[RMDB]
RNA sequence: GGGAACGACUCGAGUAGAGUCGAAAAUCGGUCGGCGUCAGCAGGGCCGCCACGGGGACGGGAAAGACCCCGAAGUGUUCGAAAUACGCCCCGGAGGGCACGUUACGACAGGUGCCGACCUGCCGGAAGGCUUCGCCCGCGCAGGGCCGCAGCGGCAUAAAGAGCGAGUAUUCGUACUCGCUCUUUAAAAAGAAACAACAACAACAAC
Reactivity to 2A3 in 0.01 (KOAc 150mM, MgCl2 10mM, bicine 150mM(pH8.5), 24C), signal-to-noise 2, nucleotides 027 to 156: u090c020g020g000u020c040g000g000c010g020u020c000a020g100c040a130g090g070g000c100c100g060c000c030a040c020g020g000g010g050a020c040g000g000g040a020a270a000g060a060c000c000c010c030g000a110a040g120u140g040u050u300c170g030a000a080a080u150a030c020g090c030c000c020c010g050g010a130g060g000g000c010a010c100g020u030u210a090c060g040a030c120a080g110g020u010g020c010c000g010a010c000c000u000g000c000c010g000g030a070a010g020g000c000u050u090c060g020c000c010c010g000c060g000c120a110g000g000g040c000c030g000c000a050g140c000g020g000c000a000
Reactivity to DMS in 0.01 (KOAc 150mM, MgCl2 10mM, bicine 150mM(pH8.5), 24C), signal-to-noise 1, nucleotides 027 to 156: u010c030g000g010u000c010g030g040c020g010u010c060a210g040c030a230g020g060g040c020c010g030c040c010a020c020g010g000g010g000a140c040g000g000g010a150a130a210g000a160c030c000c010c080g010a020a070g080u010g000u000u010c010g010a090a140a150u010a060c040g000c000c020c000c010g000g000a170g040g010g020c080a010c010g000u010u000a080c010g010a110c020a150g030g010u020g000c000c010g010a060c010c010u000g040c000c000g010g010a160a080g040g010c010u010u000c020g010c050c010c130g040c190g010c070a160g000g020g030c010c080g000c040a180g010c030g000g030c080a290
Description:
The record gives the reactivity of an RNA of 207 nucleotides to 2A3 and DMS. For DMS, 1,766 sequencing reads were counted. 2A3 is a SHAPE reagent: it acylates the 2'-hydroxyl of flexible nucleotides of all four kinds.